[RMDB]
RNA sequence: GGGAACGACUCGAGUAGAGUCGAAAAUCCUGGUCCCUAUAACGGAGGGAACCGCAUGAGGCUGGUUUCACAGAGCAGUGAACACUUUCUUCUCUCGACAGUGGAGGGAUUACAGGCUGCUGCAUUCUCGGUCCAUAUAGCCUGGUGAGCCUAGCCCGUCAUACUCUUCCUUCGGGAAGAGUAUGACAAAAGAAACAACAACAACAAC
Reactivity to 2A3 in 0.01 (KOAc 150mM, MgCl2 10mM, bicine 150mM(pH8.5), 24C), signal-to-noise 2, nucleotides 027 to 156: u040c000c020u000g010g000u010c000c000c000u070a060u010a190a070c170g100g040a050g000g040g010a060a160c020c070g120c040a130u100g050a060g130g000c040u010g020g030u050u200u150c040a040c030a020g030a040g020c030a000g000u010g080a150a040c040a050c070u000u090u060c000u060u000c010u010c000u020c040g180a110c020a050g060u130g090g030a030g000g000g000a010u040u000a020c000a030g050g030c010u030g030c000u010g020c000a120u210u040c090u010c070g030g040u060c020c020a040u150a060u100a180g000c030c000u030g090g000u020g000a010g020c010c000u010a020g000c000c020c000
The record gives the reactivity of an RNA of 207 nucleotides to 2A3. Values cover nucleotides 27 to 156. The RNA was probed in 150 mM KOAc, 10 mM MgCl2 and 150 mM bicine (pH 8.5) at 24 C. Source: RMDB library ARCHII, as collected in RNAgym. For 2A3, 784 sequencing reads were counted. For 2A3 the reverse transcriptase was SuperScript II with manganese.